Record summary
This 177-nucleotide RNA was probed chemically with 2A3 and DMS. For 2A3, 7,336 sequencing reads were counted. It was measured as part of the RMDB library TTRDES.

RNA sequence: GGGAACGACUCGAGUAGAGUCGAAAAGAUAUGGACUGUAUUGAACUUUGAUCGUGUCCUUCGGAAACGAAGGCACGGGAGUUCUUUACAGUCCUAAGUCAAAGAGCUCAAGUUCGCUUGAGCUCAACAUCACAGCUAAGUUCGCUUAGCUGUGAUGAAAAGAAACAACAACAACAAC
Reactivity to 2A3 in 0.01 (KOAc 150mM, MgCl2 10mM, bicine 150mM(pH8.5), 24C), signal-to-noise 3, nucleotides 027 to 126: g060a020u080a060u120g000g000a000c000u000g000u040a000u020u000g000a010a010c020u280u210u130g140a140u260c020g010u030g210u250c000c000u010u010c010g020g020a060a060a030c010g010a020a000g000g000c010a000c000g000g010g010a020g000u020u030c000u000u000u010a000c000a000g010u000c000c010u000a000a000g000u000c010a060a010a270g010a000g000c010u000c000a000a030g030u090u190c270g100c170u010u020g000a000g000c000u000c010a000a000
Reactivity to DMS in 0.01 (KOAc 150mM, MgCl2 10mM, bicine 150mM(pH8.5), 24C), signal-to-noise 2, nucleotides 027 to 126: g000a020u000a300u000g010g000a010c000u030g010u000a000u000u000g000a010a010c000u000u000u010g010a110u010c000g030u000g000u020c010c020u000u000c000g010g000a110a090a240c020g000a000a010g010g000c010a010c000g010g000g000a010g000u000u010c010u000u000u000a010c000a000g010u000c000c000u000a010a050g010u010c030a100a190a180g010a010g010c000u010c000a010a010g010u000u000c300g030c010u000u000g000a010g010c000u000c010a030a080